[RMDB]
RNA sequence: GGGAACGACUCGAGUAGAGUCGAAAAUGCGGCGGACCGGGUGCGUCAUGGCGUGAAAAACCGCGUGGAAAUUCCCGAUUUUUCCGAGCGUCAGGACGAGGUGGGCCACCUUUCCACCUCCAUCCGAUAUUAUUUUAGUAUUCGUACUAAAAUAAUAAAAAGAAACAACAACAACAAC
Reactivity to DMS in 0.01 (KOAc 150mM, MgCl2 10mM, bicine 150mM(pH8.5), 24C), signal-to-noise 9, nucleotides 027 to 126: u000g010c020g010g010c050g010g000a100c300c030g010g010g010u000g020c080g010u000c020a060u000g010g010c010g010u010g000a080a080a070a130a110c060c010g000c040g020u000g010g000a080a080a190u000u000c000c010c000g010a100u010u010u010u000u000c030c130g000a130g000c020g000u000c050a040g000g020a040c250g000a030g000g010u000g010g000g010c200c090a080c130c080u000u010u010c010c000a020c010c000u000c050c040a090u000c010c010g010a220
Reactivity to 2A3 in 0.01 (KOAc 150mM, MgCl2 10mM, bicine 150mM(pH8.5), 24C), signal-to-noise 2, nucleotides 027 to 126: u060g000c010g020g010c010g030g030a040c020c020g040g000g030u060g030c020g010u020c010a050u050g040g000c010g010u060g040a130a050a000a010a050c020c010g000c010g030u040g020g060a150a070a070u060u010c010c000c000g010a030u100u060u020u100u030c030c040g050a070g050c020g040u030c050a020g010g010a010c020g000a010g000g010u010g010g000g020c050c020a170c030c000u060u100u030c000c000a010c000c000u000c010c000a030u000c000c010g000a010
Notes:
This 177-nucleotide RNA was probed chemically with DMS and 2A3. High 2A3 reactivity points to a flexible backbone, as in loops and unpaired stretches. It was measured as part of the RMDB library OK2TRN. 2A3 adducts were read by reverse transcription with SuperScript II with manganese. Conditions: 150 mM KOAc, 10 mM MgCl2 and 150 mM bicine (pH 8.5), 24 C.